[RMDB]
RNA sequence: GGGAACGACUCGAGUAGAGUCGAAAAGGAGCGUCGAAGCCGGUGCCGCCCUUGAAGGUCAGCACGACCUUGCCCUCCUCCGAGGCGACGACGUUGGUCACCUUGGGCUCAGCCUUCUUGGCGGCUGCCGGGUUAUAGAAUUCGUUCUAUAACCCGGAAAAGAAACAACAACAACAAC
Reactivity to DMS in 0.01 (KOAc 150mM, MgCl2 10mM, bicine 150mM(pH8.5), 24C), signal-to-noise 6, nucleotides 027 to 126: g000g000a060g020c040g020u010c030g020a090a140g010c040c030g010g020u000g020c030c020g010c010c020c090u000u000g010a020a020g010g010u000c180a090g020c120a150c170g000a060c060c060u000u000g000c020c010c020u000c020c030u000c040c020g000a060g010g010c030g010a070c030g020a090c190g020u000u010g010g000u000c020a050c030c030u010u000g010g010g000c070u000c110a130g000c020c020u000u000c050u000u010g000g010c040g010g010c010u000g010
Reactivity to 2A3 in 0.01 (KOAc 150mM, MgCl2 10mM, bicine 150mM(pH8.5), 24C), signal-to-noise 3, nucleotides 027 to 126: g050g000a060g020c040g040u030c050g060a070a020g030c040c020g040g050u060g020c010c010g030c030c000c010u000u070g030a010a000g000g000u040c040a040g090c110a080c160g100a080c010c000u010u070g050c000c000c000u030c010c000u000c010c010g030a040g010g030c010g000a010c000g020a020c130g150u160u250g120g030u020c010a020c040c000u020u050g030g000g010c030u020c040a020g000c010c000u030u060c020u050u070g010g020c010g000g010c020u010g030